[RMDB]
RNA sequence: GGGAACGACUCGAGUAGAGUCGAAAAUGAAAGACUAGGAAACUCCAAUAAAUAAGUGGUAAUCCUAGCGAAUCCACGGCGAGGAAACUAGGACACUAACCAUGUGAUCCCGGACGCUAGAAAAAAACGCUAAACUAUGAUUCGUCAUAGUUUAGCGAAAAGAAACAACAACAACAAC
Reactivity to DMS in 0.01 (KOAc 150mM, MgCl2 10mM, bicine 150mM(pH8.5), 24C), signal-to-noise 4, nucleotides 027 to 126: u000g000a140a100a130g010a140c020u000a040g000g030a010a030a300c230u010c000c010a050a050u020a040a090a120u000a080a110g020u000g000g000u010a150a180u000c000c000u010a010g020c040g000a160a080u000c020c030a120c060g000g000c040g020a110g000g020a070a090a120c050u000a030g000g020a070c020a030c020u000a080a120c300c280a070u010g000u000g000a130u000c000c000c000g020g010a100c010g020c020u000a130g020a020a000a070a050a040a050a080
Reactivity to 2A3 in 0.01 (KOAc 150mM, MgCl2 10mM, bicine 150mM(pH8.5), 24C), signal-to-noise 4, nucleotides 027 to 126: u140g010a070a050a020g080a140c010u010a010g010g020a020a070a030c060u070c070c020a030a010u190a180a230a050u250a300a070g040u010g040g000u010a040a010u000c000c000u000a000g000c000g010a020a040u000c010c010a020c060g020g000c020g020a050g010g130a100a040a060c000u010a020g000g020a010c000a000c020u040a030a040c020c010a040u150g050u000g070a280u030c000c010c000g000g030a010c010g010c020u070a030g070a030a110a020a010a020a000a010
Chemical mapping of a 177-nucleotide RNA with DMS and 2A3. For DMS the reverse transcriptase was MarathonRT.